Conditions: 150 mM KOAc, 10 mM MgCl2 and 150 mM bicine (pH 8.5), 24 C.
Chemical mapping of a 177-nucleotide RNA with DMS and 2A3.
It was measured as part of the RMDB libraries RFM100 and RFMREP.
DMS adducts were read by reverse transcription with MarathonRT.
RNA sequence: GGGAACGACUCGAGUAGAGUCGAAAAUCUGUGAGUUCACAGUCGGCAAGGUCAUCGCCCUGACGGGUGAUUGACCUGGUUGAUGAUUAGUCCCGCACCGCGUGAGGCAGGAAACUGAGCAGCGAAAGCAACUUACAUAAUUCGUUAUGUAAGUUGCAAAAGAAACAACAACAACAAC
Reactivity to DMS in 0.01 (KOAc 150mM, MgCl2 10mM, bicine 150mM(pH8.5), 24C), signal-to-noise 9, nucleotides 027 to 126: u020c020u000g010u000g010a220g020u020u030c020a030c030a170g000u000c020g010g000c030a060a010g010g010u000c000a030u000c010g000c000c000c000u010g050a140c300g000g010g020u000g000a020u010u020g010a000c000c000u000g000g020u000u000g010a060u010g000a110u010u010a120g000u000c000c000c010g020c150a080c110c080g010c050g010u000g000a140g010g010c020a030g000g010a090a080a100c050u000g000a080g000c020a120g010c040g010a090a090a140
Reactivity to 2A3 in 0.01 (KOAc 150mM, MgCl2 10mM, bicine 150mM(pH8.5), 24C), signal-to-noise 9, nucleotides 027 to 126: u040c020u010g040u010g040a170g140u270u220c030a010c010a030g010u010c010g010g000c020a030a010g000g000u000c000a000u000c010g020c000c000c020u110g180a100c140g010g000g000u010g010a060u020u160g000a000c000c000u000g000g000u010u010g020a100u030g010a050u070u140a040g060u030c000c010c000g010c020a070c020c050g040c020g040u070g040a070g030g010c020a010g010g060a060a040a030c030u030g010a010g030c020a010g010c030g060a080a020a000